[RMDB]
Overview
The record gives the reactivity of an RNA of 177 nucleotides to DMS and 2A3. The RNA was probed in 150 mM KOAc, 10 mM MgCl2 and 150 mM bicine (pH 8.5) at 24 C. The 2A3 profile rests on 10,629 reads. Reactivities are rounded to 0.1 and cut off at 0 and 3. Source: RMDB library OK1LIB, as collected in RNAgym. For 2A3 the reverse transcriptase was SuperScript II with manganese. Values cover nucleotides 27 to 126. For DMS, 10,272 sequencing reads were counted.

RNA sequence: GGGAACGACUCGAGUAGAGUCGAAAAGGAGAUCGAAGAUGACCGACGUCAGCACGGUCCGGAUGUAGGUCCGCAUGCAUCCAAGUUGACGAAACUUGACGAUUUCCAAAGCGGACAAGAAGUCAAAAGUCGAUAUAUACUUCGGUAUAUAUCGACUAAAAGAAACAACAACAACAAC
Reactivity to DMS in 0.01 (KOAc 150mM, MgCl2 10mM, bicine 150mM(pH8.5), 24C), signal-to-noise 5, nucleotides 027 to 126: g000g030a030g010a000u000c000g010a150a110g010a160u010g010a010c000c010g020a150c060g010u040c220a140g040c150a100c000g010g000u010c030c100g000g000a010u000g000u000a030g000g010u000c000c000g000c000a100u010g000c000a000u000c010c010a080a000g010u000u000g010a140c260g000a170a020a010c010u010u010g010a230c020g010a030u000u010u000c010c000a040a100a140g010c020g000g000a020c000a150a100g000a080a090g010u030c090a040a090a140
Reactivity to 2A3 in 0.01 (KOAc 150mM, MgCl2 10mM, bicine 150mM(pH8.5), 24C), signal-to-noise 6, nucleotides 027 to 126: g010g000a010g000a000u010c010g050a110a030g090a180u190g010a010c010c030g040a080c040g150u240c100a050g020c110a020c040g020g020u000c010c010g000g000a000u000g000u000a000g000g010u000c000c000g000c000a000u000g000c000a000u000c000c000a010a010g010u010u030g080a120c130g050a050a010a000c010u020u050g020a040c000g010a010u010u000u000c000c020a060a060a000g000c010g000g010a010c000a010a050g140a090a010g120u160c100a070a050a050